[RMDB]
RNA sequence: GGGAACGACUCGAGUAGAGUCGAAAAGAUAUGGAGUUAACGAAUCGUAUGCAUGCGAAGAACUCGGAAACGAGGGAGCAUGGAUACGACUAUUAACUCCUAAGUCAAAGACCGGUUCGCCGGUCAAGGCUAGAAUAUUGUUCGCAAUAUUCUAGCCAAAAGAAACAACAACAACAAC
Reactivity to 2A3 in 0.01 (KOAc 150mM, MgCl2 10mM, bicine 150mM(pH8.5), 24C), signal-to-noise 4, nucleotides 027 to 126: g040a010u050a050u180g000g010a000g010u020u010a030a030c080g070a240a300u020c010g010u010a010u030g200c020a000u000g020c000g200a300a020g020a060a050c010u000c010g000g050a080a070a020c000g000a000g020g000g000a010g030c000a000u010g010g010a010u010a000c010g010a000c010u000a010u010u010a000a000c000u010c000c000u020a100a010g020u000c010a080a100a080g020a010c010c000g000g000u100u060c300g040c040c030g050g010u010c020a000a020
Reactivity to DMS in 0.01 (KOAc 150mM, MgCl2 10mM, bicine 150mM(pH8.5), 24C), signal-to-noise 3, nucleotides 027 to 126: g000a020u000a300u010g000g010a010g010u000u000a000a000c100g020a040a080u010c010g000u010a000u010g010c000a010u000g010c000g020a090a120g010a110a230c020u000c010g000g000a140a060a160c010g000a010g020g000g010a060g000c000a010u000g000g010a020u000a000c000g010a010c020u000a170u000u000a020a010c000u000c000c010u010a030a110g010u010c020a080a130a150g010a020c000c000g010g010u000u020c300g020c000c000g000g010u000c010a020a050